[RMDB]
RNA sequence: GGGAACGACUCGAGUAGAGUCGAAAACCUGCGGUAGCAUGACUCUUAAUGGUCUUUGGCUUGACAACACAGUCUGGUGCCCACGACACGUAAUGUGCCCGGCUGACCAGUUGUCUGAUCCUAAUUAAAAUCGGGAACUUCGGUUCCCGAAAAAGAAACAACAACAACAAC
Reactivity to 2A3 in 0.01 (KOAc 150mM, MgCl2 10mM, bicine 150mM(pH8.5), 24C), signal-to-noise 5, nucleotides 027 to 129: c000c000u000g030c060g080g000u030a020g060c030a050u070g020a070c010u020c030u120u210a070a060u180g000g000u030c000u030u040u050g070g010c040u030u040g000a000c000a000a000c030a020c000a020g020u000c040u150g020g010u130g010c050c050c030a040c030g230a050c000a020c100g080u080a100a070u100g050u030g000c000c000c010g000g000c000u000g000a050c000c000a010g000u000u000g000u010c000u000g000a050u020c000c010u040a060a050u060u130a030a060a060a120
Reactivity to DMS in 0.01 (KOAc 150mM, MgCl2 10mM, bicine 150mM(pH8.5), 24C), signal-to-noise 2, nucleotides 027 to 129: c040c000u000g040c070g010g030u010a020g020c130a080u000g050a020c020u000c090u010u070a060a090u060g040g020u000c070u030u040u050g000g000c060u010u080g000a050c050a000a000c040a060c050a030g000u000c000u040g090g030u030g040c010c200c100a170c180g050a130c000a070c140g110u050a260a080u050g010u000g000c030c000c010g000g020c010u010g000a000c040c090a030g000u000u000g010u020c020u020g030a000u030c020c000u000a000a000u030u030a090a100a060a080